[RMDB]
Annotation
An RNA of 207 nucleotides, treated with DMS and 2A3 and read out base by base.
RNA sequence: GGGAACGACUCGAGUAGAGUCGAAAAACGAAUCAUUCGCUAUCUCCUAGGACAUAUGUGAGAUCUCUUGUCUAACAUCGACAACGCACCAUUCUAGCCAGCAAGCUGACCGGUGGUUUUGAGGCUCUCUUUCAUGUUCCGUCGACCCCGUGAGCCUCAUAAAACGUCACUUCGGUGACGUUUUAUGAAAAGAAACAACAACAACAAC
Reactivity to DMS in 0.01 (KOAc 150mM, MgCl2 10mM, bicine 150mM(pH8.5), 24C), signal-to-noise 2, nucleotides 027 to 156: a060c040g020a070a180u010c110a190u020u010c030g040c020u000a090u000c070u000c020c030u000a130g000g000a040c060a030u000a050u020g040u000g000a120g020a060u000c030u000c040u000u010g010u010c050u000a150a070c110a110u020c170g000a070c000a040a070c090g030c060a020c030c030a140u020u000c020u010a120g020c000c020a080g020c040a070a150g110c050u000g020a060c040c050g000g010u000g000g000u010u010u010u000g000a100g000g010c020u010c000u000c040u000u000u000c070a090u000g000u000u010c030c010g000u000c040g010a130c020c020c020c040g000u000g030a060g010c000c040u000
Reactivity to 2A3 in 0.01 (KOAc 150mM, MgCl2 10mM, bicine 150mM(pH8.5), 24C), signal-to-noise 3, nucleotides 027 to 156: a000c030g060a030a090u250c060a090u170u100c040g030c040u060a070u110c040u030c040c040u030a040g000g040a060c020a060u140a040u140g070u060g060a120g010a170u020c020u030c010u050u060g010u000c040u070a180a050c010a210u120c100g020a030c030a050a040c050g060c090a000c010c000a040u060u100c040u120a020g030c020c010a030g020c040a080a020g040c000u020g020a050c000c070g000g020u000g020g030u030u040u080u110g010a010g010g020c010u030c010u010c020u040u120u030c060a080u110g040u170u010c020c000g090u040c020g060a070c000c020c010c000g010u020g000a020g020c030c000u020
2A3 adducts were read by reverse transcription with SuperScript II with manganese. DMS adducts were read by reverse transcription with MarathonRT. Values cover nucleotides 27 to 156. Reactivities are rounded to 0.1 and cut off at 0 and 3. For DMS, 3,222 sequencing reads were counted. The RNA was probed in 150 mM KOAc, 10 mM MgCl2 and 150 mM bicine (pH 8.5) at 24 C.